[RMDB]
RNA sequence: GGGAACGACUCGAGUAGAGUCGAAAAGCUCUGUAAUGGGAUGGGAUCCGAAGCCCCAUUGAGGGAUAAUACAGGCUCUCCCAUCCAAGUCCUAUUCCAACACGUCCUCGUCGUACAGAGUGGUAACUAAGGUAUAGCUCCUUCGGGAGCUAUACAACAAUGGAGACAAGUUCGCUUGUCUCCAUUGAAAAGAAACAACAACAACAAC
Reactivity to DMS in 0.01 (KOAc 150mM, MgCl2 10mM, bicine 150mM(pH8.5), 24C), signal-to-noise 2, nucleotides 027 to 156: g060c010u000c000u000g010u010a110a110u000g000g020g010a020u030g000g020g000a060u000c040c040g040a150a200g000c020c000c000c040a300u000u000g020a130g020g050g010a120u000a120a110u000a070c070a170g020g000c020u000c080u000c000c010c000a020u010c020c020a040a070g010u010c020c040u000a130u000u010c060c040a060a170c060a080c030g000u020c050c050u000c030g000u020c060g040u000a060c020a050g000a030g050u000g000g030u000a100a140c090u010a090a110g010g020u000a000u000a000g010c000u000c000c000u000u000c300g150g000g010a010g020c000u000a000u000a020c000a040a130
Reactivity to 2A3 in 0.01 (KOAc 150mM, MgCl2 10mM, bicine 150mM(pH8.5), 24C), signal-to-noise 1, nucleotides 027 to 156: g010c010u020c000u000g030u040a040a290u100g110g010g010a000u030g000g000g000a050u150c010c040g040a050a050g030c010c000c020c000a150u120u290g040a240g010g000g040a040u100a160a120u230a220c130a060g000g000c010u050c000u000c030c000c030a020u000c000c000a000a000g020u020c010c000u040a050u010u060c030c020a080a020c040a000c050g050u070c010c040u090c000g060u000c000g040u040a000c020a010g040a090g000u020g030g030u110a170a120c100u020a000a070g070g010u010a000u000a000g010c000u000c000c000u030u100c130g020g000g000a010g020c010u000a000u000a010c000a000a000
Chemical mapping of a 207-nucleotide RNA with DMS and 2A3.
Reactivities are given for positions 27 through 156.
The DMS profile rests on 2,990 reads.
Conditions: 150 mM KOAc, 10 mM MgCl2 and 150 mM bicine (pH 8.5), 24 C.
Source: RMDB library M2RFPK, as collected in RNAgym.